Chemical mapping of a 177-nucleotide RNA with DMS and 2A3. DMS adducts were read by reverse transcription with MarathonRT. Values cover nucleotides 27 to 126.

RNA sequence: GGGAACGACUCGAGUAGAGUCGAAAAGAUGCUGCGCACGCUGAUUAAAGUCACGUUCGGUUAUCCUGCGAUUUUUGACGAGGUUCGGCAGGAAUGCCAAAUCAACAAUGCGCAUGUUGUCGCCGGACGAACAGUGUAUAUUCGUAUACACUGUUCGAAAAGAAACAACAACAACAAC
Reactivity to DMS in 0.01 (KOAc 150mM, MgCl2 10mM, bicine 150mM(pH8.5), 24C), signal-to-noise 9, nucleotides 027 to 126: g000a060u000g010c060u010g010c090g010c040a040c120g010c090u010g010a060u010u010a070a090a120g010u010c090a080c140g010u000u010c120g010g010u000u010a140u010c020c020u000g010c010g000a040u000u010u010u020u010g020a090c170g000a090g000g010u010u010c070g010g020c000a010g010g040a100a170u010g000c020c010a050a040a040u000c030a050a080c080a090a100u010g010c010g000c010a040u000g020u010u000g010u000c120g000c020c000g000g010a300
Reactivity to 2A3 in 0.01 (KOAc 150mM, MgCl2 10mM, bicine 150mM(pH8.5), 24C), signal-to-noise 9, nucleotides 027 to 126: g040a010u080g000c030u010g000c010g000c010a020c040g050c060u020g000a040u060u170a170a090a040g100u090c050a020c170g050u090u100c060g010g010u050u060a070u090c010c000u010g010c010g040a080u020u040u000u090u270g110a090c090g040a070g120g000u110u070c030g080g000c000a000g010g070a040a030u050g000c000c000a020a040a020u050c010a000a070c020a060a050u060g010c010g000c010a020u120g040u060u100g010u010c010g010c050c020g030g030a030